[RMDB]
RNA sequence: GGGAACGACUCGAGUAGAGUCGAAAACUUUAUGUCGGACUCUGACCCUCUUAUGUCUUGGUGGAAGUGAAAGUGUAAGUGGUACCAAGUCAUUUGGAUUGCCAGUACUUUGCUAUAGAGUACACAAUACCAUACCCAGGUUCGCCUGGGUAUGGUAAAAAGAAACAACAACAACAAC
Reactivity to 2A3 in 0.01 (KOAc 150mM, MgCl2 10mM, bicine 150mM(pH8.5), 24C), signal-to-noise 1, nucleotides 027 to 126: c020u090u220u070a150u200g130u020c060g070g010a000c050u060c030u050g060a080c020c000c000u040c000u000u070a010u070g060u010c020u020u060g150g000u010g050g130a010a150g050u060g140a180a100a020g000u010g010u240a140a020g030u010g050g010u050a050c000c020a050a000g030u100c060a070u060u000u090g050g050a050u090u070g130c070c000a000g000u000a000c010u010u020u040g060c050u000a030u020a300g050a010g090u120a030c110a000c030a070a120
Reactivity to DMS in 0.01 (KOAc 150mM, MgCl2 10mM, bicine 150mM(pH8.5), 24C), signal-to-noise 1, nucleotides 027 to 126: c020u000u020u000a010u010g000u000c030g020g000a110c140u000c050u000g000a300c080c020c010u020c080u010u000a050u000g030u000c010u010u000g030g050u000g000g000a060a130g000u000g000a040a020a180g010u010g010u000a070a050g020u000g010g000u000a030c010c010a030a020g010u030c070a030u000u010u000g000g010a090u010u000g000c000c080a030g020u010a070c040u010u000u010g000c080u000a060u010a030g000a020g030u000a040c060a080c170a170a140